[RMDB]
Structure probing data (2A3) for a 207-nucleotide construct. 2A3 adducts were read by reverse transcription with SuperScript II with manganese. The RNA was probed in 150 mM KOAc, 10 mM MgCl2 and 150 mM bicine (pH 8.5) at 24 C.

RNA sequence: GGGAACGACUCGAGUAGAGUCGAAAACGAGGAUGUCCUCUCUUCCCCCUCGCUUCCCCUUCAAUUCGGGCCGGCUCAUCUUGGCAGAGGGCGGCGGUCCUCAGUGCUCUUACUCUUUCUUGAUAAGAGGAGACUGCUGGACUCGCCGCCCCGGCUCCCAAUCAGGUAAGUUCGCUUACCUGAUUGGAAAAGAAACAACAACAACAAC
Reactivity to 2A3 in 0.01 (KOAc 150mM, MgCl2 10mM, bicine 150mM(pH8.5), 24C), signal-to-noise 1, nucleotides 027 to 156: c030g000a020g090g060a180u190g190u300c080c120u130c040u130c110u140u240c000c000c000c010c000u000c000g000c110u020u020c020c000c000c050u060u230c000a110a190u130u150c000g000g000g000c010c000g000g000c060u060c100a200u060c120u170u230g050g000c000a050g140a160g200g000g020c060g010g000c000g010g010u000c010c010u000c000a050g000u110g200c020u020c020u090u210a180c010u060c060u060u130u090c070u170u200g080a050u110a140a000g000a010g020g000a000g060a020c000u000g030c000u000g030g010a010c040u010c230g000c000c000g000c000c000c020c000g010g000c000u020c000